Source: RMDB library OK3TST, as collected in RNAgym. Structure probing data (DMS and 2A3) for a 207-nucleotide construct. Reactivities are rounded to 0.1 and cut off at 0 and 3. The RNA was probed in 150 mM KOAc, 10 mM MgCl2 and 150 mM bicine (pH 8.5) at 24 C.
RNA sequence: GGGAACGACUCGAGUAGAGUCGAAAAGGGCGGUCUGGAAUAAUGACAAACACAUUUGGCCCUGAGUGAAGAAGUCGUCGUCGCCUCGCAUUCCAGCAACUGGGAUUUGAGGAAUUUCGAACCGCACACCAAGGGGCCCUCAUUGUGCUCCGUGGCCGAACCCAGGAGAAUUCGUUCUCCUGGGUUCAAAAGAAACAACAACAACAAC
Reactivity to DMS in 0.01 (KOAc 150mM, MgCl2 10mM, bicine 150mM(pH8.5), 24C), signal-to-noise 1, nucleotides 027 to 156: g000g010g030c020g040g070u000c000u000g010g060a110a100u000a090a190u000g000a040c020a150a050a150c080a040c050a190u000u000u000g000g020c020c020c000u000g000a130g000u000g000a080a080g020a160a140g000u000c030g010u000c090g000u010c150g000c010c000u020c030g030c170a110u010u010c020c000a060g030c210a050a130c190u000g000g020g000a000u000u000u000g000a040g020g030a050a060u000u010u000c020g000a060a080c030c010g030c030a110c000a070c030c010a070a240g010g000g010g040c050c020c060u000c150a110u000u000g000u010g100c050u000c000c000g000u000g010g040c000c060
Reactivity to 2A3 in 0.01 (KOAc 150mM, MgCl2 10mM, bicine 150mM(pH8.5), 24C), signal-to-noise 2, nucleotides 027 to 156: g040g020g000c030g020g020u020c090u140g000g060a050a060u130a080a080u080g010a070c070a000a110a000c040a010c030a090u050u080u180g010g020c000c000c010u030g020a070g010u080g050a110a220g020a130a020g030u110c060g000u020c010g030u020c020g090c010c010u010c000g030c000a010u000u000c000c000a000g040c070a150a190c220u030g000g000g000a010u010u050u060g000a010g020g040a050a050u050u050u020c010g020a040a000c000c000g000c000a020c000a000c020c030a070a070g000g020g000g000c000c000c000u090c000a120u050u120g030u080g000c040u000c050c040g080u160g050g000c040c070
The DMS profile rests on 1,672 reads.